RNA sequence: GGGAACGACUCGAGUAGAGUCGAAAACUGCCGCCGGGACGCAGUGAUCCUCGCAGGGUCGCACGGUCGCCUCGGGUCGGCCUCGUGUCGGCUCGACCUGCGAGGGGAGGGAGUGGCGAGCCCGACCAAAACUUUCUCGCCUUCGGGCGAGAAAGAACUAUAUUAGGCUGUUCGCAGCCUAAUAUAGAAAAGAAACAACAACAACAAC
Reactivity to DMS in 0.01 (KOAc 150mM, MgCl2 10mM, bicine 150mM(pH8.5), 24C), signal-to-noise 1, nucleotides 027 to 156: c010u000g000c030c020g020c020c070g040g010g020a190c050g000c020a060g000u010g010a100u000c020c000u000c060g010c020a070g020g000g000u000c040g030c070a120c030g000g010u010c060g020c000c050u000c000g040g040g040u000c000g020g010c010c020u000c250g020u050g050u000c010g030g020c010u000c010g000a130c000c000u000g000c010g020a050g060g000g000g010a200g000g020g000a150g010u010g030g000c070g000a130g000c040c010c000g000a070c010c040a010a070a170a110c020u000u000u010c000u000c010g050c000c010u000u000c270g020g040g050c020g000a000g000a000a000a000g010a050a200
Reactivity to 2A3 in 0.01 (KOAc 150mM, MgCl2 10mM, bicine 150mM(pH8.5), 24C), signal-to-noise 3, nucleotides 027 to 156: c020u030g060c050c040g140c110c110g160g050g040a030c020g030c020a010g000u010g030a080u050c000c000u010c000g000c010a010g040g020g050u140c040g070c110a100c140g110g170u040c010g020c000c000u000c010g000g000g000u010c000g000g010c000c040u130c110g280u300g000u000c000g000g000c010u010c000g010a000c000c010u010g000c000g000a000g000g010g010g000a100g010g010g000a020g000u020g010g010c010g000a010g010c020c020c000g030a060c000c030a000a050a000a100c000u000u000u010c000u000c000g020c040c040u010u040c210g060g000g000c010g010a010g020a000a000a000g000a000a000